RNA sequence: GGGAACGACUCGAGUAGAGUCGAAAAGAUAUGGAUUACUGGUAAUGAGCAACAGCCCAGCUCGGAAACGAGCUGGGACAUGCUCAACCAGGUAAUCCUAAGUCAAAAGACCUCCUUCGGGAGGUCAUCCUGUCAUGUGGUUCGCCACAUGACAGGAAAAAGAAACAACAACAACAAC
Reactivity to DMS in 0.01 (KOAc 150mM, MgCl2 10mM, bicine 150mM(pH8.5), 24C), signal-to-noise 1, nucleotides 027 to 126: g010a080u010a300u020g020g020a020u000u000a010c000u000g000g000u000a090a070u000g010a020g020c030a030a050c300a190g010c000c000c000a000g010c020u000c000g000g000a060a130a240c000g020a010g020c010u000g000g000g020a000c020a030u010g020c010u000c040a030a130c030c000a000g000g050u000a010a000u000c000c000u000a030a090g000u000c060a010a110a270a070g020a000c000c000u010c000c000u000u020c200g060g030g000a000g010g040u000c000a000